[RMDB]
RNA sequence: GGGAACGACUCGAGUAGAGUCGAAAAAGGCAAAUAGCGUCGAAUGUGAAAUCCCGCGACUCAACUGCGGGCUUGCAGCCGAUACGAGCAAGCUGUAGGAACGUAAUUGAGAAUGCACAGCGGACGCAAUAAAUUAUAUAUUCGUAUAUAAUUUAUUAAAAGAAACAACAACAACAAC
Reactivity to DMS in 0.01 (KOAc 150mM, MgCl2 10mM, bicine 150mM(pH8.5), 24C), signal-to-noise 4, nucleotides 027 to 126: a050g010g000c120a040a090a090u030a110g000c000g010u000c000g000a140a130u020g000u010g000a070a140a130u020c000c000c010g050c090g000a110c000u010c000a010a010c110u000g000c000g010g000g000c020u010u000g000c000a000g010c000c040g000a130u030a080c180g010a130g020c150a290a160g010c000u000g020u000a000g000g010a030a010c000g000u000a010a040u000u000g000a040g000a100a080u030g000c020a010c030a040g000c300g010g010a010c000g000c010
Reactivity to 2A3 in 0.01 (KOAc 150mM, MgCl2 10mM, bicine 150mM(pH8.5), 24C), signal-to-noise 4, nucleotides 027 to 126: a000g150g020c090a100a080a060u190a130g010c000g000u000c010g090a130a080u070g030u010g060a100a100a050u050c020c000c000g000c030g030a030c000u000c000a010a000c010u000g000c010g000g000g000c000u000u000g000c000a000g000c000c010g040a050u100a290c160g030a120g100c080a070a020g000c000u010g000u020a020g000g020a010a010c000g000u000a010a010u010u000g000a000g030a070a030u140g020c010a010c000a000g150c080g110g020a010c000g000c000